[RMDB]
RNA sequence: GGGAACGACUCGAGUAGAGUCGAAAAGAUAUGGAACAGCAUCGAUCUGUACACCUGAUGACCUCGGAAACGAGCAAGGGUUGACAGGGAGCUGUUCCUAAGUCAAAUCCUACGUUCGCGUAGGAAACUUAAUUUUGAAGUUCGCUUCAAAAUUAAGAAAAGAAACAACAACAACAAC
Reactivity to DMS in 0.01 (KOAc 150mM, MgCl2 10mM, bicine 150mM(pH8.5), 24C), signal-to-noise 5, nucleotides 027 to 126: g010a040u000a300u010g010g000a020a000c000a010g010c000a300u000c190g010a060u010c000u000g000u000a070c020a030c010c000u010g000a170u010g000a080c300c010u000c000g010g010a110a100a180c010g020a020g000c040a080a140g000g000g010u000u000g020a020c000a010g000g000g000a040g020c010u000g000u000u000c000c000u000a010a060g000u000c030a090a110a150u000c000c000u000a000c010g010u000u010c240g000c020g000u000a000g000g000a010a030a100
Reactivity to 2A3 in 0.01 (KOAc 150mM, MgCl2 10mM, bicine 150mM(pH8.5), 24C), signal-to-noise 4, nucleotides 027 to 126: g000a000u070a040u160g000g010a000a010c010a010g030c000a190u300c110g070a090u000c020u010g020u070a150c020a000c020c010u080g060a250u190g050a130c030c000u000c010g010g030a100a080a070c010g000a000g000c030a070a200g010g000g020u090u200g030a000c010a000g020g020g020a010g000c000u000g000u000u000c000c000u000a010a000g000u000c020a040a040a160u040c000c000u010a000c010g020u030u080c300g010c000g170u000a000g000g000a010a000a020
Overview: This 177-nucleotide RNA was probed chemically with DMS and 2A3. Values are in units of 0.01, from 0 to 300, in steps of 10. The RNA was probed in 150 mM KOAc, 10 mM MgCl2 and 150 mM bicine (pH 8.5) at 24 C.